Structure probing data (2A3) for a 207-nucleotide construct.
The data come from the RNA Mapping Database (RMDB), library OK3TST.
The RNA was probed in 150 mM KOAc, 10 mM MgCl2 and 150 mM bicine (pH 8.5) at 24 C.

RNA sequence: GGGAACGACUCGAGUAGAGUCGAAAAGGCCAGGCACCAUGGCUCAUGCCUGUAAUUGCAGCACUUUGGGAGGCUGAAGCAGGUGGAUCACCUGAGGUCAGGAGUUUGAGACCAGCCCGACCAACGUGGAAAAACCCCAUCUCUACUAAAAAAAAAAUAAUGCUUUUACUUUCGAGUAAAAGCAUUAAAAAGAAACAACAACAACAAC
Reactivity to 2A3 in 0.01 (KOAc 150mM, MgCl2 10mM, bicine 150mM(pH8.5), 24C), signal-to-noise 1, nucleotides 027 to 156: g030g010c000c000a000g030g010c010a000c050c020a030u060g010g020c020u010c070a030u020g010c000c030u030g010u020a150a210u100u080g050c010a010g050c000a020c040u040u030u190g030g100g030a070g000g010c000u030g040a040a000g070c000a010g000g020u060g030g060a090u160c000a050c020c030u030g000a020g030g150u060c030a060g020g110a130g040u080u140u140g040a060g000a000c000c000a000g000c000c000c000g010a010c040c000a000a060c020g010u000g030g010a010a010a000a050a030c010c000c060c010a050u000c040u040c000u080a060c000u110a000a040a030a010a150a000a000a300a000a000